[RMDB]
RNA sequence: GGGAACGACUCGAGUAGAGUCGAAAAAGUAUGGCAGGUAGACUGUACUCAUCUUGAAGGACAAAUAAUAUUAGUAGCCAUUAAUGUGGAAUCAGGAUUACUAUGGACAAAAUUAUUAAAACAAGAGGUUAUUCUGAUUCUUCGGAAUCAGAAUAACAAAAGAAACAACAACAACAAC
Reactivity to DMS in 0.01 (KOAc 150mM, MgCl2 10mM, bicine 150mM(pH8.5), 24C), signal-to-noise 1, nucleotides 027 to 126: a060g000u000a010u020g000g000c050a080g000g020u000a070g020a100c090u010g020u010a030c060u020c070a070u010c040u000u000g050a160a080g000g010a090c120a110a110a060u000a040a050u000a090u000u000a040g000u000a080g020c000c010a080u010u010a060a070u020g010u020g070g000a080a100u000c090a040g020g010a170u000u000a080c150u000a020u010g000g020a050c120a020a030a040a070u000u000a100u000u000a050a020a020a160c050a050a110g020a150g040
Reactivity to 2A3 in 0.01 (KOAc 150mM, MgCl2 10mM, bicine 150mM(pH8.5), 24C), signal-to-noise 1, nucleotides 027 to 126: a020g060u030a000u050g010g060c040a030g050g000u100a040g020a030c030u020g050u090a090c000u000c060a080u040c050u030u110g010a110a010g030g020a030c050a060a070a020u150a050a070u150a030u170u080a020g070u010a010g030c000c020a010u000u150a160a060u050g030u030g070g070a110a070u100c010a020g000g000a010u010u010a000c070u060a060u070g010g020a030c040a060a200a000a020u160u130a080u040u240a130a120a010a000c000a050a090g040a020g300